[RMDB]
RNA sequence: GGGAACGACUCGAGUAGAGUCGAAAACAUAGCGUUUCACAAUGUGCGCCAUUAACAUUGUUUAUGCAAGCACGUUUCGCAAUGUACGGCGCAGAAACAUUGCCAACACAAAUACGCUACACGAUGUAAAACAUCGGUGCGUUCGCGCACCGAUGAACAUGGUGAGCAAGUUCGCUUGCUCACCAUGAAAAGAAACAACAACAACAAC
Reactivity to 2A3 in 0.01 (KOAc 150mM, MgCl2 10mM, bicine 150mM(pH8.5), 24C), signal-to-noise 6, nucleotides 027 to 156: c050a040u080a010g010c010g010u010u120u170c160a060c020a040a010u020g000u010g000c010g010c010c010a080u160u170a080a020c020a020u020u040g060u030u110u140a100u140g080c090a060a080g110c060a030c210g020u040u100u120c020g000c000a000a010u000g000u020a020c040g010g000c010g010c010a000g030a000a060a010c010a000u000u010g050c060c050a210a020c060a050c020a120a100a040u120a020c010g000c000u040a030c080a010c080g140a060u130g040u270a020a060a040a040c010a000u000c000g000g000u000g000c010g000u020u020c190g010c000g000c050a000c000c000g000a000u000g000a010a000
Reactivity to DMS in 0.01 (KOAc 150mM, MgCl2 10mM, bicine 150mM(pH8.5), 24C), signal-to-noise 2, nucleotides 027 to 156: c030a100u000a020g000c020g010u000u000u010c110a060c020a050a050u000g000u000g010c030g030c010c020a120u000u000a110a060c000a030u000u000g000u010u000u000a040u020g000c030a140a120g020c070a080c060g040u020u000u000c000g020c030a020a020u000g010u000a100c100g000g000c050g020c020a070g000a120a100a110c010a040u010u000g000c010c040a080a080c090a100c120a080a000a090u000a050c000g010c010u020a050c040a130c100g000a110u000g010u000a070a040a070a210c010a020u000c000g010g000u000g020c000g010u000u000c200g030c020g000c020a020c000c000g000a000u000g000a010a110

The record gives the reactivity of an RNA of 207 nucleotides to 2A3 and DMS. The 2A3 profile rests on 4,468 reads. The reactions ran in a buffer of 150 mM KOAc, 10 mM MgCl2 and 150 mM bicine (pH 8.5), at 24 C. For DMS, 5,047 sequencing reads were counted. Reactivities are rounded to 0.1 and cut off at 0 and 3. For DMS the reverse transcriptase was MarathonRT.